[RMDB]
RNA sequence: GGGAACGACUCGAGUAGAGUCGAAAAGCAAUAUUAUUGCUACACGUCUAAGGACACUUUAGAUGAUAUCUUACAACAGGCUAAUAAGUCUGUUGGUAUUAUAUCUAUGCCUUUGGGAUAUGUGUCUAAAUCUCAAGCUUCGGCUUGAGAAAAAGAAACAACAACAACAAC
Reactivity to 2A3 in 0.01 (KOAc 150mM, MgCl2 10mM, bicine 150mM(pH8.5), 24C), signal-to-noise 8, nucleotides 027 to 129: g010c000a020a020u090a080u300u130a060u080u050g000c000u020a030c030a010c040g030u000c020u020a020a020g060g040a020c010a030c090u050u080u140a040g000a050u050g010a000u030a000u010c010u010u020a000c000a000a000c000a010g000g000c000u050a070a070u150a300a040g000u020c000u000g000u000u000g010g000u010a010u000u000a010u000a000u000c030u040a060u100g040c000c010u070u090u130g070g000g010a060u070a050u230g030u010g010u000c010u040a080a100a100
Reactivity to DMS in 0.01 (KOAc 150mM, MgCl2 10mM, bicine 150mM(pH8.5), 24C), signal-to-noise 5, nucleotides 027 to 129: g000c020a000a000u040a150u050u090a100u020u000g030c000u000a080c020a160c030g020u030c040u000a060a090g000g000a000c060a050c130u040u030u040a080g020a050u040g030a000u000a010u020c060u000u000a030c020a030a000c010a010g000g010c010u030a240a160u040a130a080g030u010c020u020g040u000u000g000g020u030a020u030u000a050u000a030u060c040u000a030u000g010c020c020u020u050u060g030g010g060a040u060a000u020g000u070g020u030c030u000a020a070a050